[RMDB]
RNA sequence: GGGAACGACUCGAGUAGAGUCGAAAACUUCCAGCGUGUAUUUAUGAUUCAGGUAAAUAUCACCCAGCACGCAGUUCUGGACGUAGUCCUGGAACAGAUUGAUGAUUUCCGGAUUCCGGGACAGGAAAGACACUUUCGUAUUCGUACGAAAGUGUCUAAAAGAAACAACAACAACAAC
Reactivity to DMS in 0.01 (KOAc 150mM, MgCl2 10mM, bicine 150mM(pH8.5), 24C), signal-to-noise 2, nucleotides 027 to 126: c300u010u010c010c020a130g000c060g040u000g000u000a000u000u000u000a000u000g010a170u010u000c160a080g000g000u000a040a020a040u000a070u000c150a210c030c000c040a120g000c040a040c010g020c030a170g010u010u010c010u000g000g010a100c300g010u000a100g000u010c000c010u010g030g010a020a020c050a050g010a160u010u000g000a160u010g010a110u020u000u000c000c030g010g000a270u000u000c000c000g000g000g010a010c000a120g000g000a050a050
Reactivity to 2A3 in 0.01 (KOAc 150mM, MgCl2 10mM, bicine 150mM(pH8.5), 24C), signal-to-noise 1, nucleotides 027 to 126: c040u140u070c000c030a010g040c030g000u030g000u030a080u040u130u040a090u040g150a190u040u160c060a040g160g100u080a040a040a080u160a100u130c010a090c000c020c030a020g000c020a000c000g000c000a030g030u100u030c010u040g010g050a010c020g080u070a030g000u040c010c040u000g030g010a010a030c020a040g040a120u110u240g070a050u040g050a060u020u090u000c030c010g030g060a120u030u000c000c000g010g020g000a010c000a020g000g050a050a150
Record summary:
Chemical mapping of a 177-nucleotide RNA with DMS and 2A3. Source: RMDB library OK2TRN, as collected in RNAgym. 2A3 adducts were read by reverse transcription with SuperScript II with manganese. Reactivities are rounded to 0.1 and cut off at 0 and 3. For DMS, 1,698 sequencing reads were counted.